[RMDB]
RNA sequence: GGGAACGACUCGAGUAGAGUCGAAAACGGAGUACGUUUGUCUGAUAACGCUAGAGCACCGCUAGCUUCAGACGACGUAACGAUGUUCGAGUGCACGUAGCCUCCGCACUUGCGACGUGCUUGAGUGACACCACUACAUAUUCGUAUGUAGUGGUGUAAAAGAAACAACAACAACAAC
Reactivity to DMS in 0.01 (KOAc 150mM, MgCl2 10mM, bicine 150mM(pH8.5), 24C), signal-to-noise 9, nucleotides 027 to 126: c010g000g000a300g000u000a000c000g010u000u000u050g030u000c000u000g010a020u030a050a110c240g000c000u010a000g000a100g010c090a040c100c080g000c000u000a000g000c010u000u000c000a010g000a010c000g000a000c000g000u010a030a050c010g000a280u100g000u000u010c080g000a090g020u010g010c010a090c120g000u010a120g000c050c040u010c110c070g010c030a040c040u000u000g000c020g010a020c000g010u010g000c000u000u010g000a040g010u000g000
Reactivity to 2A3 in 0.01 (KOAc 150mM, MgCl2 10mM, bicine 150mM(pH8.5), 24C), signal-to-noise 9, nucleotides 027 to 126: c010g010g010a050g020u020a000c010g010u030u210u300g000u050c000u000g020a060u050a210a110c120g000c000u000a010g010a030g110c070a080c110c060g000c050u000a000g000c000u000u000c000a000g000a000c000g000a000c000g000u030a030a010c010g020a040u070g020u020u050c040g040a030g040u060g020c030a020c150g100u120a030g050c020c020u040c040c040g000c010a030c000u010u070g020c010g010a010c020g050u050g000c000u010u040g020a030g010u040g010